Background:
Structure probing data (2A3 and DMS) for a 177-nucleotide construct. The DMS profile rests on 32,376 reads. The RNA was probed in 150 mM KOAc, 10 mM MgCl2 and 150 mM bicine (pH 8.5) at 24 C.
[RMDB]
RNA sequence: GGGAACGACUCGAGUAGAGUCGAAAAAUUGCCGCCUUGUCCGAUGCACCGCUGGUUGCCUCACACUCCAAUGCCCAUGUGCUUUGCCAGCAAAGCCGCAACCUCACCGACAGGCAGCUUGACGCCAAUUAUCGCUAGUAUUCGUACUAGCGAUAAUAAAAGAAACAACAACAACAAC
Reactivity to 2A3 in 0.01 (KOAc 150mM, MgCl2 10mM, bicine 150mM(pH8.5), 24C), signal-to-noise 7, nucleotides 027 to 126: a000u090u080g030c010c010g020c030c010u080u120g040u020c040c020g070a060u080g030c060a050c060c030g020c060u040g050g000u040u050g020c010c000u050c010a040c000a020c030u020c020c020a060a060u120g030c010c010c010a040u110g030u020g020c010u040u040u060g040c030c010a050g030c010a050a040a010g020c020c020g020c030a030a050c000c010u040c020a050c030c010g060a030c020a020g010g020c000a010g030c010u030u080g030a040c050g020c030c000a010
Reactivity to DMS in 0.01 (KOAc 150mM, MgCl2 10mM, bicine 150mM(pH8.5), 24C), signal-to-noise 9, nucleotides 027 to 126: a110u000u000g010c020c020g010c040c020u010u000g010u010c040c040g010a100u000g000c090a080c080c070g020c050u000g010g010u000u000g020c040c030u000c060a080c090a090c050u000c030c040a070a090u010g010c020c020c030a100u010g020u000g010c030u000u000u000g010c060c070a110g010c040a050a050a070g010c020c040g010c080a060a060c050c030u000c040a070c070c050g010a070c120a060g000g000c030a050g010c050u000u000g000a110c100g000c040c050a110